RNA sequence: GGGAACGACUCGAGUAGAGUCGAAAAUGUCAAUGAUGUCUAAAAAAUUACUACGAUUUAAUUCGAAUUGCUGUGAGAUCAAUCUUAUACAAUUCUGAGACACGCGGGGACUGUUCGCAGUCCCCAAUCUUAUUAGCAAGUUCGCUUGCUAAUAAGAAAAAGAAACAACAACAACAAC
Reactivity to 2A3 in 0.01 (KOAc 150mM, MgCl2 10mM, bicine 150mM(pH8.5), 24C), signal-to-noise 2, nucleotides 027 to 126: u100g030u040c040a020a110u130g070a090u010g060u010c010u090a070a120a000a000a000a070u090u050a070c090u100a070c100g060a050u070u030u140a100a080u100u040c010g020a010a010u040u010g090c150u080g060u030g000a020g010a020u150c090a170a130u010c130u020u000a010u000a040c000a000a020u030u000c000u050g020a000g010a030c020a000c030g160c030g030g010g050g000a000c000u000g010u070u120c260g000c090a000g000u000c000c010c000c030a000a000
Reactivity to DMS in 0.01 (KOAc 150mM, MgCl2 10mM, bicine 150mM(pH8.5), 24C), signal-to-noise 2, nucleotides 027 to 126: u030g020u000c120a080a110u000g020a140u000g010u000c010u030a000a050a070a070a050a040u000u000a050c170u020a130c150g000a050u010u000u000a050a130u000u010c110g000a000a020u000u000g000c240u000g020u000g000a020g000a060u010c170a090a120u010c000u000u000a010u010a050c010a010a020u000u000c020u010g020a070g000a010c040a030c120g020c270g000g010g000g000a010c000u000g030u020u010c220g010c000a010g010u010c000c000c000c000a010a020